[RMDB]
RNA sequence: GGGAACGACUCGAGUAGAGUCGAAAAAUCUUGGCGAAGUCAGCGCGGAAGGAGCGCGCAACUCCUUACCCUCGCCUUUUUUUUUCCGCUCCCGUUGGCGAAAGCGUUCAGCGGAAAAGGGACCAAACAUCUAGAGCUAAUUCGUUAGCUCUAGAUGAAAAGAAACAACAACAACAAC
Reactivity to 2A3 in 0.01 (KOAc 150mM, MgCl2 10mM, bicine 150mM(pH8.5), 24C), signal-to-noise 5, nucleotides 027 to 126: a000u040c020u030u050g010g000c010g010a060a010g180u200c060a030g100c030g030c100g080g000a030a020g010g010a020g020c090g000c030g020c070a040a140c000u010c010c000u010u090a300c000c000c010u000c010g000c000c000u020u020u000u010u010u000u000u020u000c020c010g000c030u040c000c010c010g020u010u020g030g000c040g060a270a170a050g060c030g040u120u120c030a010g010c000g010g000a010a000a000a040g020g000g000a010c010c010a040a040a040
Reactivity to DMS in 0.01 (KOAc 150mM, MgCl2 10mM, bicine 150mM(pH8.5), 24C), signal-to-noise 8, nucleotides 027 to 126: a020u000c040u000u000g010g020c010g010a040a090g010u000c170a110g030c160g010c180g020g000a050a020g000g000a030g000c030g010c290g000c190a080a080c010u000c010c000u010u000a120c040c020c050u000c010g000c000c000u000u000u000u000u000u000u000u000u000c000c020g010c100u000c090c030c010g010u000u000g010g010c050g000a100a080a110g010c030g020u000u010c040a030g010c010g000g000a010a010a050a090g000g010g010a130c050c030a090a080a180